[RMDB]
RNA sequence: GGGAACGACUCGAGUAGAGUCGAAAAUUAUUCUUAUUGCGAAUCAAGAGGUAAGUCUUAAUGACCAACGUAACCAACAAUCAUGAUCGUUCGCUGGGCCUGCCGGGUGGCGUCGUAAUUGAGGCUGGCAAGGCUCAGGACGUGCCGGGCUGGGAUACAUGGUUACAGUGUUCGCACUGUAACCAUGAAAAGAAACAACAACAACAAC
Reactivity to DMS in 0.01 (KOAc 150mM, MgCl2 10mM, bicine 150mM(pH8.5), 24C), signal-to-noise 1, nucleotides 027 to 156: u010u010a090u000u000c000u010u000a010u010u000g050c000g000a130a150u000c070a120a080g020a140g050g030u000a060a100g030u000c030u010u000a100a050u000g010a110c060c000a020a060c100g000u000a090a120c030c010a080a060c060a060a110u020c070a150u000g000a160u000c100g050u000u000c070g030c010u000g000g000g040c050c040u000g010c050c010g000g050g080u000g070g030c030g030u000c020g020u030a140a180u000u000g010a040g030g030c020u000g010g000c030a070a110g030g000c000u000c010a030g000g020a050c010g010u000g000c100c040g000g010g040c010u010g040g010g000a080u000a130
Reactivity to 2A3 in 0.01 (KOAc 150mM, MgCl2 10mM, bicine 150mM(pH8.5), 24C), signal-to-noise 2, nucleotides 027 to 156: u120u050a030u080u010c000u110u060a080u080u260g060c080g070a100a040u050c050a090a000g000a010g090g030u030a000a060g030u040c010u040u120a090a060u210g020a040c010c030a070a080c030g140u070a060a020c010c010a030a040c050a030a090u150c050a060u110g000a070u110c000g050u100u050c120g010c140u000g000g000g010c000c000u000g000c020c020g020g050g080u100g140g000c030g180u040c020g040u030a000a030u090u150g030a000g000g100c050u080g000g040c100a140a110g010g000c040u000c000a000g000g000a010c000g020u000g040c080c010g120g000g000c070u020g020g000g010a010u030a060